[RMDB]
RNA sequence: GGGAACGACUCGAGUAGAGUCGAAAAUGAUCACUGAGUUCUUCAACGGCAAGGAGCCCUGCAAGUCCAUCAACCCCGACGAGGCCGUGGCUUACGGUGCCGCCGUGCAGGCCGCCAUUCUGUCUGGCCCAUACCAUCCAUUCGUGGAUGGUAUGGGAAAAGAAACAACAACAACAAC
Reactivity to DMS in 0.01 (KOAc 150mM, MgCl2 10mM, bicine 150mM(pH8.5), 24C), signal-to-noise 2, nucleotides 027 to 126: u000g010a110u030c080a090c030u000g000a070g020u000u000c020u010u000c080a060a100c100g000g020c040a080a120g010g030a160g020c040c000c040u000g010c110a060a120g010u010c030c030a050u010c090a080a120c030c000c000c050g000a090c060g010a120g000g010c040c090g000u010g010g000c070u000u000a050c020g010g000u000g020c070c090g030c030c000g020u000g000c130a070g010g000c050c030g000c020c050a100u000u000c080u000g000u000c070u010g010g000
Reactivity to 2A3 in 0.01 (KOAc 150mM, MgCl2 10mM, bicine 150mM(pH8.5), 24C), signal-to-noise 2, nucleotides 027 to 126: u110g000a030u080c010a000c110u040g060a010g110u050u010c030u090u050c050a090a030c060g020g000c030a050a110g110g010a030g100c000c000c000u020g000c060a080a050g020u000c020c000a020u060c040a090a090c040c000c020c000g040a050c040g020a040g030g000c020c040g190u050g040g000c000u060u050a050c020g090g000u070g120c000c030g000c010c000g000u030g050c000a020g000g070c000c030g050c020c020a100u120u030c000u050g100u020c000u010g000g040